RNA sequence: GGGAACGACUCGAGUAGAGUCGAAAACCUCCUAUUAGGCAACUAAUGGGCUAACAUUGGGUGAAUUGCAUGAAAGCUAAGGCGUAACGCUAUGCUAACCUGCAGCGAAUUACAUCGACUGAUAUUACCGUCAGAUAAAUUUCGAUUUAUCUGACGGAAAAGAAACAACAACAACAAC
Reactivity to 2A3 in 0.01 (KOAc 150mM, MgCl2 10mM, bicine 150mM(pH8.5), 24C), signal-to-noise 9, nucleotides 027 to 126: c000c000u030c000c000u000a010u010u010a010g040g000c020a040a020c050u010a010a000u000g000g010g000c010u080a130a030c030a150u090u140g090g000g010u060g090a110a080u100u030g000c010a020u030g060a140a060a010g020c020u050a070a120g080g000c040g110u180a180a050c120g010c010u030a020u100g000c000u010a020a050c000c010u020g000c000a010g010c010g100a090a040u090u060a090c030a060u050c050g140a120c100u070g080a040u020a090u180u150a090
Reactivity to DMS in 0.01 (KOAc 150mM, MgCl2 10mM, bicine 150mM(pH8.5), 24C), signal-to-noise 7, nucleotides 027 to 126: c010c000u000c010c000u000a010u000u010a020g010g010c300a150a170c010u000a010a000u010g010g010g000c300u020a060a070c150a070u000u020g020g020g030u000g000a090a070u000u010g020c010a030u000g010a070a220a050g000c010u000a050a140g010g010c000g010u020a120a080c160g000c010u000a300u020g000c040u010a060a300c040c070u000g000c030a010g010c080g020a110a090u010u010a070c060a030u010c020g010a070c050u000g030a100u000a070u010u000a150
Structure probing data (2A3 and DMS) for a 177-nucleotide construct. The RNA was probed in 150 mM KOAc, 10 mM MgCl2 and 150 mM bicine (pH 8.5) at 24 C.